[RMDB]
RNA sequence: GGGAACGACUCGAGUAGAGUCGAAAACGACGCAAAUGUAUGCGGCUUCAACAUUGUAAGCAUUUGGAGACUACGCAUGCCUCGGUGGACCUGGAAUCCGGCGAGCUACAUUCAGUGUCCUCCAUAGGUAUAUAUUAAUAUUCGUAUUAAUAUAUACAAAAGAAACAACAACAACAAC
Reactivity to 2A3 in 0.01 (KOAc 150mM, MgCl2 10mM, bicine 150mM(pH8.5), 24C), signal-to-noise 9, nucleotides 027 to 126: c050g050a020c010g000c050a050a080a040u100g030u050a030u060g010c010g020g010c000u020u030c010a050a050c020a120u110u260g130u300a110a070g100c060a110u030u020u040g070g010a020g010a060c060u100a050c210g010c000a010u060g010c010c030u070c050g180g300u010g010g010a020c010c040u090g090g120a030a050u020c030c000g020g030c040g030a020g000c040u080a020c010a030u010u070c020a030g020u000g000u100c010c020u040c020c010a060u130a110g100
Reactivity to DMS in 0.01 (KOAc 150mM, MgCl2 10mM, bicine 150mM(pH8.5), 24C), signal-to-noise 3, nucleotides 027 to 126: c150g010a040c030g030c040a170a040a020u000g000u000a060u020g020c000g000g000c010u030u000c020a040a070c260a080u030u040g010u040a120a120g030c140a060u010u020u010g000g000a070g010a100c060u040a110c030g010c050a030u010g000c150c020u010c020g020g000u020g000g000a010c030c010u030g000g010a100a250u010c020c010g000g000c010g010a030g020c140u010a050c040a030u000u000c070a050g010u010g000u010c040c100u020c020c010a090u010a070g000